[RMDB]
RNA sequence: GGGAACGACUCGAGUAGAGUCGAAAACAGCCUAAAAGAAAAGGAGAUCAAAAAGGUUGGCAGACUUUUCGCAAAAAUGACAUAUCAGAUGAGAGCAUGCCAAGUUGUGGCAGAAUCACUCAUAGCAAAGAUAGAUGUAGUUCGCUACAUCUAUCUUAAAAGAAACAACAACAACAAC
Reactivity to 2A3 in 0.01 (KOAc 150mM, MgCl2 10mM, bicine 150mM(pH8.5), 24C), signal-to-noise 3, nucleotides 027 to 126: c020a030g090c000c010u050a060a050a070a090g070a020a060a000a010g020g010a080g010a110u040c070a060a070a020a030a050g050g080u040u030g070g000c010a020g020a140c010u040u070u070u080c030g000c080a010a040a050a070a130u120g040a030c050a070u200a050u140c040a030g030a120u040g020a010g000a000g070c040a030u030g000c000c000a030a080g130u150u170g250u080g060g000c000a000g060a020a030u080c030a020c060u010c020a030u070a020g090c100a070
Reactivity to DMS in 0.01 (KOAc 150mM, MgCl2 10mM, bicine 150mM(pH8.5), 24C), signal-to-noise 7, nucleotides 027 to 126: c160a120g010c020c020u000a040a080a110a100g010a070a050a050a080g000g010a110g010a070u010c050a030a060a100a100a070g000g010u010u000g010g010c140a060g010a080c040u000u000u000u000c030g000c170a020a050a050a070a050u000g000a060c120a060u010a080u010c100a070g000a050u010g020a040g000a070g010c200a100u000g010c010c000a020a140g020u000u000g030u000g020g000c000a020g000a090a070u010c120a080c030u000c030a020u000a090g010c160a060
The data come from the RNA Mapping Database (RMDB), library OK2TRN. Structure probing data (2A3 and DMS) for a 177-nucleotide construct. The RNA was probed in 150 mM KOAc, 10 mM MgCl2 and 150 mM bicine (pH 8.5) at 24 C. For DMS the reverse transcriptase was MarathonRT. For DMS, 7,718 sequencing reads were counted.